[RMDB]
RNA sequence: GGGAACGACUCGAGUAGAGUCGAAAACUGACUUGGCCCACGCUGCAGCUGCACUGGCCUGAUCUGAGGGUUUCUUCUCCCUGGAGGCUCAGAAAGGUCUCUUACUCAGCAUCUCUGUCUGCAAAAACAUUUGUUUCAGGCACAAAAGGACCAUCCACUCCUGAUUAAUAUUCGUAUUAAUCAGGAGAAAAGAAACAACAACAACAAC
Reactivity to DMS in 0.01 (KOAc 150mM, MgCl2 10mM, bicine 150mM(pH8.5), 24C), signal-to-noise 3, nucleotides 027 to 156: c050u000g000a100c050u010u010g010g030c010c010c030a100c090g000c040u000g040c020a080g000c050u000g000c060a100c040u000g020g000c020c020u000g000a100u000c030u000g000a080g010g020g010u000u000u010c020u000u000c040u000c080c020c060u010g010g020a100g020g010c010u000c030a100g020a060a120a080g020g000u000c030u010c040u000u000a070c050u000c030a060g000c000a140u000c040u000c030u010g020u000c030u010g020c130a060a040a080a070a070c040a220u000u000u020g020u000u000u000c040a070g020g000c010a050c050a020a070a100a080g020g020a060c040c010a110u000c030c050a230
Reactivity to 2A3 in 0.01 (KOAc 150mM, MgCl2 10mM, bicine 150mM(pH8.5), 24C), signal-to-noise 7, nucleotides 027 to 156: c030u060g060a020c020u040u090g050g000c020c010c020a040c070g030c030u050g000c030a060g010c020u110g010c050a050c100u040g010g010c000c010u060g050a160u030c020u050g040a060g040g050g030u080u200u040c020u100u030c040u070c010c020c000u010g010g010a010g010g010c010u020c080a010g060a060a040a010g020g000u010c020u000c000u060u030a060c040u020c040a020g020c010a080u040c040u010c010u060g040u020c010u020g030c060a030a030a030a080a030c060a140u090u100u160g050u020u060u050c020a010g010g020c030a010c040a060a080a010a050g050g010a030c060c010a060u090c020c050a040